[RMDB]
RNA sequence: GGGAACGACUCGAGUAGAGUCGAAAACUCUGACGCUUCGGCGUCAGAGAAACCUCUAAGCAGAUUGGCGAGGACGACGCUGCGGAGCGCGUUUGCCAUCAAAAACGCAUAGAUUCGUCUAUGCGAAACCAGGUAAUUCUUUCGAGAAUUACCUGGUAAAAGAAACAACAACAACAAC
Reactivity to DMS in 0.01 (KOAc 150mM, MgCl2 10mM, bicine 150mM(pH8.5), 24C), signal-to-noise 3, nucleotides 027 to 126: c000u000c000u000g010a000c000g040c000u000u010c190g030g000c000g020u000c000a000g000a010g010a030a070a090c030c010u010c130u010a130a140g020c160a120g000a050u000u000g020g010c040g020a100g010g010a100c010g000a090c010g010c000u000g020c300g010g000a060g030c030g000c000g010u000u000u000g000c000c010a040u010c040a040a050a080a120a190c000g000c000a000u000a010g000a040u000u020c200g030u000c000u000a000u000g000c000g000a010a060
Reactivity to 2A3 in 0.01 (KOAc 150mM, MgCl2 10mM, bicine 150mM(pH8.5), 24C), signal-to-noise 4, nucleotides 027 to 126: c010u010c000u020g020a000c000g000c020u040u060c210g150g000c020g000u010c000a000g000a000g000a000a000a000c030c010u000c080u130a100a110g080c090a030g050a260u210u220g050g030c020g050a090g090g030a050c020g040a080c010g010c030u180g090c070g160g130a050g000c030g000c000g010u000u020u060g040c020c000a020u020c020a020a060a030a020a020c010g000c000a000u010a000g010a000u030u050c090g040u000c090u000a000u000g010c010g010a120a000